Description: Structure probing data (DMS and 2A3) for a 177-nucleotide construct. For DMS the reverse transcriptase was MarathonRT. Conditions: 150 mM KOAc, 10 mM MgCl2 and 150 mM bicine (pH 8.5), 24 C. For DMS, 21,349 sequencing reads were counted.
RNA sequence: GGGAACGACUCGAGUAGAGUCGAAAAACACACACACUAGGGUUCUUCUGAUAGAACCCAGCUCAACAAACUGAUGUAAUUGUUGACAUAGAUCUUACAUCAGGAGAACUAUGUAAGUGUGUGAGAAGAUAGUUAGCACUUUCGAGUGUUAGCUAUCAAAAGAAACAACAACAACAAC
Reactivity to DMS in 0.01 (KOAc 150mM, MgCl2 10mM, bicine 150mM(pH8.5), 24C), signal-to-noise 6, nucleotides 027 to 126: a090c030a220c000a000c000a010c000a030c010u010a110g000g010g000u000u000c000u000u010c080u020g000a050u010a010g020a080a030c050c030c040a010g020c160u010c000a020a030c020a020a050a050c050u020g010a120u020g010u010a080a050u010u000g010u000u000g000a030c050a090u030a050g010a060u010c050u010u010a050c110a060u020c090a050g000g000a010g000a020a040c020u010a050u020g000u010a020a020g010u010g010u000g010u010g000a090g010a100a100
Reactivity to 2A3 in 0.01 (KOAc 150mM, MgCl2 10mM, bicine 150mM(pH8.5), 24C), signal-to-noise 6, nucleotides 027 to 126: a000c020a000c000a000c000a000c000a000c020u050a040g050g000g000u000u000c000u020u000c020u040g040a030u020a040g020a020a010c000c000c000a000g000c010u000c000a010a020c010a000a030a010c020u100g040a050u120g050u060a060a080u040u030g020u010u030g000a000c000a010u120a030g070a050u020c000u020u060a030c020a020u010c010a000g010g010a010g000a000a000c010u020a040u160g080u060a040a040g000u000g000u000g000u000g000a020g020a010a000